[RMDB]
RNA sequence: GGGAACGACUCGAGUAGAGUCGAAAACACGGUCACUACGGUGACCGUGAAGAAAUUUCGCUAGCACACGAUCACACCUAGCGUUCUCAAUAACGAUCGAAAAGACGUGCUAUACGUAGCACGUCAAGGUUUUAGUACCCUUCGGGGUACUAAAACCAAAAGAAACAACAACAACAAC
Reactivity to 2A3 in 0.01 (KOAc 150mM, MgCl2 10mM, bicine 150mM(pH8.5), 24C), signal-to-noise 4, nucleotides 027 to 126: c020a000c010g000g010u010c000a000c010u040a020c270g160g020u000g010a000c000c000g000u000g000a000a010g060a000a110a040u050u040u030c010g000c000u000a000g000c060a020c030a040c120g020a020u040c010a020c010a050c110c000u000a000g000c010g000u000u000c020u010c000a020a040u200a070a070c080g020a020u070c020g020a040a040a020a060g010a000c000g010u000g000c000u000a020u010a060c230g160u020a000g000c000a000c010g020u000c000a000a000